[RMDB]
RNA sequence: GGGAACGACUCGAGUAGAGUCGAAAAAGGCUCCUGGGUCUUGCAGACACAGGGGGACCUCCUCAGGGUUCCUCCACUCAGGAUCCUCCAGGAUCCUGGGACAGUAGGCUCUAAGAGCAGCUAUGAGUGUACGGAGAAUGUUCGCAUUCUCCGUACAAAAAGAAACAACAACAACAAC
Reactivity to DMS in 0.01 (KOAc 150mM, MgCl2 10mM, bicine 150mM(pH8.5), 24C), signal-to-noise 1, nucleotides 027 to 126: a090g020g000c000u000c000c010u000g000g000g030u000c010u000u000g070c150a150g010a140c160a090c150a100g060g040g030g010g000a060c010c000u000c090c130u000c190a150g000g000g000u010u000c010c030u010c000c050a260c020u000c000a010g000g010a020u000c000c000u010c240c300a150g020g020a000u000c000c010u000g020g000g000a090c160a110g000u010a050g030g010c000u000c000u020a040a080g000a050g030c050a200g000c030u000a080u010g010a070g000